[RMDB]
RNA sequence: GGGAACGACUCGAGUAGAGUCGAAAAUAGAGAGAGCGCUACGUUUUGUGGCACCUUGAUAAAAAUGGUGUGCCCAGAUGUAGAAGCACACCAGCGUAGCUGUGUGGAGGCAAGUAGAUCCCCAGCACACGUCAGGGUAGUUCGCUACCCUGACGUGAAAAGAAACAACAACAACAAC
Reactivity to 2A3 in 0.01 (KOAc 150mM, MgCl2 10mM, bicine 150mM(pH8.5), 24C), signal-to-noise 3, nucleotides 027 to 126: u150a000g100a000g070a000g000a010g020c030g030c020u030a000c020g050u000u000u170u270g100u130g000g010c010a000c000c010u090u060g040a060u200a120a200a060a010a010u140g070g000u040g000u030g090c000c000c040a090g010a190u140g060u110a000g100a110a020g000c000a010c000a010c000c010a000g000c110g070u100a080g010c010u010g010u010g000u110g150g040a070g030g060c090a150a030g040u000a110g130a090u030c000c000c000c000a010g010c020a030
Reactivity to DMS in 0.01 (KOAc 150mM, MgCl2 10mM, bicine 150mM(pH8.5), 24C), signal-to-noise 1, nucleotides 027 to 126: u020a090g050a200g000a000g000a090g020c040g020c040u000a020c000g090u020u000u000u000g000u030g000g000c110a030c050c000u000u000g000a160u020a040a010a130a080a080u020g020g010u000g000u000g000c000c030c100a160g030a110u000g040u010a090g010a180a150g070c000a030c010a000c000c000a000g000c160g030u020a030g020c060u000g010u000g000u000g090g000a090g000g000c080a040a100g040u010a040g000a190u000c000c000c000c030a050g000c150a180